[RMDB]
RNA sequence: GGGAACGACUCGAGUAGAGUCGAAAAGAUAUGGAACGUUUCAGGACAUGUAGUCGAUCGGAAACGAUCGAUACUACAACAGCCUGGACGUUCCUAAGUCAAACAAGCGAGGUUCGCCUCGCUUGAAGGCUAAACUAUCGUUCGCGAUAGUUUAGCCAAAAGAAACAACAACAACAAC
Reactivity to 2A3 in 0.01 (KOAc 150mM, MgCl2 10mM, bicine 150mM(pH8.5), 24C), signal-to-noise 2, nucleotides 027 to 126: g000a010u060a000u070g000g000a010a010c030g000u050u300u300c060a020g020g010a130c160a300u300g000u010a010g030u000c000g000a000u000c010g000g000a040a000a000c000g020a000u010c020g010a020u030a050c000u010a000c000a300a120c050a080g070c000c000u000g000g010a000c000g000u000u000c010c000u000a020a000g010u000c010a090a070a110c000a000a000g010c010g000a010g020g060u100u170c270g150c110c000u010c000g000c000u010u010g000a030a000
Reactivity to DMS in 0.01 (KOAc 150mM, MgCl2 10mM, bicine 150mM(pH8.5), 24C), signal-to-noise 1, nucleotides 027 to 126: g010a000u000a100u000g000g000a030a000c010g020u010u010u010c000a000g020g000a030c080a190u000g000u000a000g010u000c000g000a020u010c010g000g000a040a000a090c000g030a020u010c000g010a030u000a010c020u000a000c010a100a140c160a270g000c000c000u000g000g000a000c010g000u010u020c000c000u000a030a100g000u010c020a170a130a300c010a000a000g010c000g010a040g000g010u010u000c290g020c000c000u000c000g000c000u000u000g000a030a030